[RMDB]
RNA sequence: GGGAACGACUCGAGUAGAGUCGAAAAGAUAUGGAGCAGAACUACACGCGCACCAGGUGAUGACCUCGGAAACGAGCAAGCCUGGGAUCGUGCUGCUCCUAAGUCAAAACAGUCGUUCGCGACUGAAGUCCGGAAUUAAGUUCGCUUAAUUCCGGACAAAAGAAACAACAACAACAAC
Reactivity to 2A3 in 0.01 (KOAc 150mM, MgCl2 10mM, bicine 150mM(pH8.5), 24C), signal-to-noise 1, nucleotides 027 to 126: g060a000u080a030u160g030g010a010g000c000a000g020a130a050c120u280a040c300a000c040g000c010g060c030a060c000c000a000g000g010u030g050a300u190g090a100c000c040u010c040g020g010a030a110a030c000g010a000g020c010a160a020g030c010c000u010g010g010g000a030u060c000g050u010g000c010u010g000c010u000c000c020u010a000a000g000u000c040a000a020a080a170c020a010g000u010c000g080u130u160c300g020c010g140a010c000u030g040a050a020
Reactivity to DMS in 0.01 (KOAc 150mM, MgCl2 10mM, bicine 150mM(pH8.5), 24C), signal-to-noise 1, nucleotides 027 to 126: g010a040u000a300u010g050g000a000g010c000a020g000a080a040c060u030a300c040a030c050g000c100g000c300a140c000c010a020g010g030u000g000a060u000g020a090c300c020u040c000g010g000a040a120a110c020g000a000g010c030a030a140g000c000c000u000g000g000g000a050u000c010g000u000g000c000u000g000c010u000c010c000u050a000a000g000u000c030a090a070a120a250c090a000g000u000c000g000u000u020c040g000c000g000a050c010u000g010a060a140

Chemical mapping of a 177-nucleotide RNA with 2A3 and DMS. DMS adducts were read by reverse transcription with MarathonRT. For 2A3, 2,333 sequencing reads were counted. Source: RMDB library TTRDEL, as collected in RNAgym.